RNA sequence: GGGAACGACUCGAGUAGAGUCGAAAAGGUACUGGUUCGCUGAAAAUCGUACAGCCCCUGGACUACGAGGAUCAGCUGCAGAGCAAUGGCUUCCGUUUCCGCAUCCAAGUGAACGAUAAGGGCGAGGGGAUCCAUUUCUUUUCGAAGAAAUGGAUCCAAAAGAAACAACAACAACAAC
Reactivity to DMS in 0.01 (KOAc 150mM, MgCl2 10mM, bicine 150mM(pH8.5), 24C), signal-to-noise 3, nucleotides 027 to 126: g030g010u000a060c040u000g000g000u000u000c160g020c050u020g000a030a030a160a090u010c030g020u000a020c120a220g010c020c010c050c090u000g000g000a100c090u000a010c050g000a060g000g020a300u000c030a030g000c000u000g010c060a050g000a120g030c030a080a100u000g000g010c030u000u000c040c040g010u000u000u000c030c000g000c140a110u010c050c050a040a110g000u000g050a030a080c110g000a050u000a080a080g010g000g000c050g000a110g010g020
Reactivity to 2A3 in 0.01 (KOAc 150mM, MgCl2 10mM, bicine 150mM(pH8.5), 24C), signal-to-noise 2, nucleotides 027 to 126: g030g010u060a060c060u090g010g120u110u140c040g000c030u000g050a020a010a040a060u020c000g010u000a040c050a070g080c000c000c040c030u090g080g050a060c000u040a010c050g010a030g010g030a020u020c000a040g000c000u020g000c030a000g020a010g080c040a090a200u140g070g000c010u070u010c000c000g010u020u020u030c020c020g000c040a060u000c020c000a060a010g040u030g120a070a030c070g040a060u060a130a100g050g000g000c010g010a030g020g050